[RMDB]
RNA sequence: GGGAACGACUCGAGUAGAGUCGAAAAUCGUGUUGGAGCGUCAAGGCAGAUGUCGAACGACAUGGUCGAUGAUGAAGGAUGUUGUUUAGCUAAAAUCUUCCUCUCCAAUAUCGUCUCAUUUGCCACGAAAAUGAGUGCCAUUCGUGGCACUCAUUUUAAAAGAAACAACAACAACAAC
Reactivity to 2A3 in 0.01 (KOAc 150mM, MgCl2 10mM, bicine 150mM(pH8.5), 24C), signal-to-noise 2, nucleotides 027 to 126: u120c020g000u030g000u010u010g000g010a050g040c060g040u000c050a090a070g020g000c000a010g030a100u050g030u120c020g060a060a040c160g000a020c010a030u040g020g030u040c100g030a180u110g000a000u030g060a130a140g070g060a020u040g020u250u040g080u030u200u090a070g000c030u090a090a080a000a000u020c040u020u000c020c000u030c000u010c000c000a000a000u040a060u070c020g000u010c010u000c010a080u050u020u080g040c030c020a090c090g050
Reactivity to DMS in 0.01 (KOAc 150mM, MgCl2 10mM, bicine 150mM(pH8.5), 24C), signal-to-noise 4, nucleotides 027 to 126: u090c030g030u020g010u010u020g000g000a040g020c270g000u000c030a070a110g010g000c020a020g000a010u000g000u000c020g010a130a110c130g010a010c030a010u010g010g010u000c030g010a110u010g020a020u010g000a080a090g000g020a030u010g000u000u000g000u000u000u010a080g010c120u000a060a040a080a060u020c090u000u000c010c050u010c000u010c010c010a040a010u020a080u020c040g000u000c020u000c020a100u020u020u010g010c050c050a100c200g010
The record gives the reactivity of an RNA of 177 nucleotides to 2A3 and DMS. The RNA was probed in 150 mM KOAc, 10 mM MgCl2 and 150 mM bicine (pH 8.5) at 24 C. The 2A3 profile rests on 1,207 reads. For 2A3 the reverse transcriptase was SuperScript II with manganese. DMS (dimethyl sulfate) methylates the pairing face of unpaired adenines and cytosines.